This 177-nucleotide RNA was probed chemically with DMS and 2A3.
The reactions ran in a buffer of 150 mM KOAc, 10 mM MgCl2 and 150 mM bicine (pH 8.5), at 24 C.
For 2A3 the reverse transcriptase was SuperScript II with manganese.

RNA sequence: GGGAACGACUCGAGUAGAGUCGAAAAGGAAAACAGUUCGCUGUUUUCCAAAUAAAUGGUAUGAUGUGCACGGCUAGCACAUAGAACCAGAAAGAGCCGAAAAAAGCUUUCCCUUCGGGGAAAGCAAUCAAGACAAUAAGUUCGCUUAUUGUCUUGAAAAAGAAACAACAACAACAAC
Reactivity to DMS in 0.01 (KOAc 150mM, MgCl2 10mM, bicine 150mM(pH8.5), 24C), signal-to-noise 5, nucleotides 027 to 126: g000g000a000a000a000a010c000a000g010u000u010c230g030c000u000g010u000u010u000u020c000c000a030a070a060u010a060a080a100u000g010g010u010a060u010g010a040u010g010u000g000c000a130c100g020g020c090u000a110g020c000a010c000a010u010a080g000a100a100c010c000a060g010a040a090a110g010a080g010c020c020g020a010a020a050a090a120a100g000c000u000u000u000c000c000c000u000u010c170g030g010g000g000a000a000a000g010c000a010a010
Reactivity to 2A3 in 0.01 (KOAc 150mM, MgCl2 10mM, bicine 150mM(pH8.5), 24C), signal-to-noise 3, nucleotides 027 to 126: g000g000a010a000a000a000c010a010g020u040u070c130g040c130u010g000u000u000u000u000c010c000a000a040a000u040a000a030a030u080g050g020u130a080u250g100a010u020g040u000g020c050a020c120g090g000c060u070a030g000c020a000c010a000u010a030g040a020a020c010c000a010g070a010a050a020g090a010g060c020c030g070a090a010a000a000a000a020g000c000u010u000u010c000c000c020u000u050c230g010g000g000g000a000a000a010g000c010a000a000